[RMDB]
RNA sequence: GGGAACGACUCGAGUAGAGUCGAAAACGCUUUGUGAUCAGAUUCAAAGUGCAACAAGCGGACGGGCAACGAUUGAUACAUAGCUGCCUCUCUGAGCUCAAAUUAAACGCUAAUUGAUCAUGAGAGUAUCAUUUGAGAGAUCUAUUUAAUAUAAUACCACUGACAUCCUCUUCGGAGGAUGUCAGUGAAAAGAAACAACAACAACAAC
Reactivity to 2A3 in 0.01 (KOAc 150mM, MgCl2 10mM, bicine 150mM(pH8.5), 24C), signal-to-noise 2, nucleotides 027 to 156: c010g040c020u000u030u110g020u050g030a110u140c070a170g050a300u220u130c050a110a000a000g020u010g070c030a040a080c000a030a020g020c000g030g020a010c030g000g060g000c020a030a000c060g080a110u000u140g020a030u070a160c050a000u120a040g000c020u020g000c000c020u020c000u020c040u030g010a010g040c000u030c080a140a140a090u070u160a120a100a000c050g000c010u000a080a000u110u040g060a000u020c050a020u140g080a000g000a000g060u060a060u150c010a040u000u130u220g120a040g000a010g020a010u080c000u120a090u130u300u000a150a300u110a000u000a090a160u130a080c000

Chemical mapping of a 207-nucleotide RNA with 2A3.